Structure probing data (2A3 and DMS) for a 207-nucleotide construct. The DMS profile rests on 2,165 reads.

[RMDB]
RNA sequence: GGGAACGACUCGAGUAGAGUCGAAAAAGAUCGAUUACGAUCGAUCAAUGAUGCCCCUCACCCACCUCUGAAGAUCCCAGGUGGGCGAGGGAACGGAGCACGGGAUCACGAGCAGUACGCUGCUCGGAAAAGAACUAGACCUUCGGGUCUAGUUCAACUGCUUAUAUGAGUUCGCUCAUAUAAGCAGAAAAGAAACAACAACAACAAC
Reactivity to 2A3 in 0.01 (KOAc 150mM, MgCl2 10mM, bicine 150mM(pH8.5), 24C), signal-to-noise 4, nucleotides 027 to 156: a000g000a000u000c000g010a000u050u070a080c200g030a020u010c000g000a000u000c020a010a070u230g090a040u190g090c030c000c000c010u010c010a020c010c000c000a000c000c000u050c050u130g060a060a030g010a030u010c000c000c010a000g000g000u000g000g000g000c000g000a000g000g000g010a010a050c070g100g070a090g100c100a060c140g000g000g000a000u010c010a000c010g000a000g000c010a000g010u040a030c220g040c160u000g010c000u030c010g000g000a010a030a010a010g000a000a000c000u000a000g010a000c010c010u040u160c300g030g000g000u000c000u000a000g010u000u000c000a000a000
Reactivity to DMS in 0.01 (KOAc 150mM, MgCl2 10mM, bicine 150mM(pH8.5), 24C), signal-to-noise 1, nucleotides 027 to 156: a160g020a010u000c000g000a060u000u000a110c240g020a100u000c010g000a000u000c010a300a180u010g020a100u000g010c050c020c010c020u010c020a010c000c020c020a040c020c020u000c040u000g020a090a060g010a080u000c010c010c000a170g030g040u000g000g000g000c040g000a030g000g010g000a000a000c090g010g000a200g060c080a140c050g000g000g020a110u000c010a040c000g010a020g010c030a020g060u000a050c300g040c010u000g000c000u010c000g020g000a020a020a100a180g030a010a000c010u000a010g000a010c000c000u000u010c300g080g040g000u020c000u000a000g000u010u010c010a040a130